The record gives the reactivity of an RNA of 177 nucleotides to DMS and 2A3. DMS adducts were read by reverse transcription with MarathonRT. The RNA was probed in 150 mM KOAc, 10 mM MgCl2 and 150 mM bicine (pH 8.5) at 24 C.
RNA sequence: GGGAACGACUCGAGUAGAGUCGAAAAUUGCAAGCCUUCGGGCUUGCAAGGUGUCGGAAUGCGGAAUAUUUAAUCCUCCGCUUAAGGAUUAUACCGACUUAAGUGCCAGGCUGUUCGCAGCCUGGAAUAGCUACUUAUGUUUCGACAUAAGUAGCUAAAAAGAAACAACAACAACAAC
Reactivity to DMS in 0.01 (KOAc 150mM, MgCl2 10mM, bicine 150mM(pH8.5), 24C), signal-to-noise 6, nucleotides 027 to 126: u000u000g010c000a010a000g010c000c000u000u010c240g040g010g020c000u000u000g000c000a000a010g010g010u000g000u000c010g000g000a130a090u000g000c030g010g000a060a070u000a120u010u010u010a110a120u010c180c090u000c050c050g010c050u000u010a050a080g010g010a110u000u010a110u000a140c030c010g000a020c030u010u010a060a110g000u010g000c000c000a010g000g010c000u000g010u000u010c180g020c010a010g010c010c000u000g000g000a030a040
Reactivity to 2A3 in 0.01 (KOAc 150mM, MgCl2 10mM, bicine 150mM(pH8.5), 24C), signal-to-noise 3, nucleotides 027 to 126: u030u010g000c000a010a000g010c000c020u070u100c230g110g010g000c010u000u000g020c000a000a000g030g020u060g010u020c000g000g030a120a040u100g010c010g030g080a080a030u120a060u150u300u130a210a100u110c020c040u020c030c000g010c000u020u050a070a030g050g010a010u020u150a030u200a160c000c000g010a010c000u070u140a180a050g100u080g150c010c000a000g000g000c000u000g020u040u070c210g030c070a010g000c000c000u000g000g000a000a000